Conditions: 150 mM KOAc, 10 mM MgCl2 and 150 mM bicine (pH 8.5), 24 C. This 207-nucleotide RNA was probed chemically with 2A3. The 2A3 profile rests on 1,050 reads. Reactivities are given for positions 27 through 156.
RNA sequence: GGGAACGACUCGAGUAGAGUCGAAAAGGAAGCGGCAAUGAUCUCGUAAACCAUAUGUCGCAAAAAAUAAUCGCCAAUACCAAGAGCGAUUCCCAGUCCUUCGCCCUCGCUGCCUAAUAAGCAGUGAGUGAGGGACCCUUAAUGGGUGUCAGCCCGGGAGUGGGUAUAGGUUCGCCUAUACCCACUCAAAAGAAACAACAACAACAAC
Reactivity to 2A3 in 0.01 (KOAc 150mM, MgCl2 10mM, bicine 150mM(pH8.5), 24C), signal-to-noise 2, nucleotides 027 to 156: g040g010a180a050g000c000g000g000c020a020a000u020g010a100u070c060u070c190g220u300a160a100a010c040c020a020u130a150u020g000u000c000g000c000a210a000a000a000a000a000u160a010a020u000c000g000c020c000a030a040u120a140c030c020a170a020g050a000g040c010g030a040u000u030c000c000c010a000g020u000c000c000u010u030c000g050c060c040c020u000c000g000c000u000g020c030c000u090a110a050u210a190a010g000c000a000g000u000g000a000g010u010g000a010g000g000g010a010c030c000c000u090u160a140a090u190g000g010g030u110g100u080c080a050g060c000c030c000g040g040
For 2A3 the reverse transcriptase was SuperScript II with manganese. Source: RMDB library RSTRND, as collected in RNAgym.